Structure probing data (DMS) for a 177-nucleotide construct.
RNA sequence: GGGAACGACUCGAGUAGAGUCGAAAAGAUAUGGACAGCGAAGAACACGAACCAUGAUGACCUGCGAUAUGAGCUCGGAAACGAGCUCAUAUCGCAGCAAGUGGAGCGUGGGAGCUGUCCUAAGUCAGGGAUAGAUAAUGUUCGCAUUAUCUAUCCCAAAAGAAACAACAACAACAAC
Reactivity to DMS in 0.01 (KOAc 150mM, MgCl2 10mM, bicine 150mM(pH8.5), 24C), signal-to-noise 2, nucleotides 027 to 126: g000a040u000a300u000g000g020a010c020a010g000c000g010a190a190g000a120a180c010a010c000g000a030a040c000c000a010u000g000a030u010g000a020c300c010u010g010c040g000a030u010a000u000g000a000g000c010u000c000g000g010a060a080a280c020g010a010g020c000u010c000a010u000a000u000c000g000c000a040g000c000a020a080g040u000g010g030a040g020c000g000u000g000g010g000a160g000c010u000g000u000c000c000u000a010a070g000u000c020a130

It was measured as part of the RMDB library TTRINS.
The RNA was probed in 150 mM KOAc, 10 mM MgCl2 and 150 mM bicine (pH 8.5) at 24 C.